[RMDB]
RNA sequence: GGGAACGACUCGAGUAGAGUCGAAAACUCAGAAUACAGUCCUUGAUCUGGGCUUGUACACCUGGAUGAUGUAUUUUAAGAGGUGUUGGUUAGGGAUUCCAGCCUCCCACUCCCCAUCCUGUGCCCUCAAUCCUGUCUUGCGAUAGGGAUGGGAAGCCAGAGUACCCAGUUUCGACUGGGUACUCUGAAAAGAAACAACAACAACAAC
Reactivity to 2A3 in 0.01 (KOAc 150mM, MgCl2 10mM, bicine 150mM(pH8.5), 24C), signal-to-noise 2, nucleotides 027 to 156: c020u020c010a040g040a030a000u020a020c000a070g150u100c070c040u150u150g060a060u020c060u170g000g030g050c070u130u110g100u260a040c020a050c010c060u020g000g000a010u030g020a010u000g050u000a190u000u070u060u080a100a100g000a000g000g010u010g030u080u090g060g000u050u080a050g030g060g000a110u150u050c020c000a000g000c030c050u040c000c000c020a030c050u070c000c020c010c000a000u010c000c010u010g070u140g060c010c000c000u080c110a020a070u060c020c010u140g030u110c110u170u050g030c030g020a060u020a030g010g030g000a000u020g010g010g010a000a000g070c050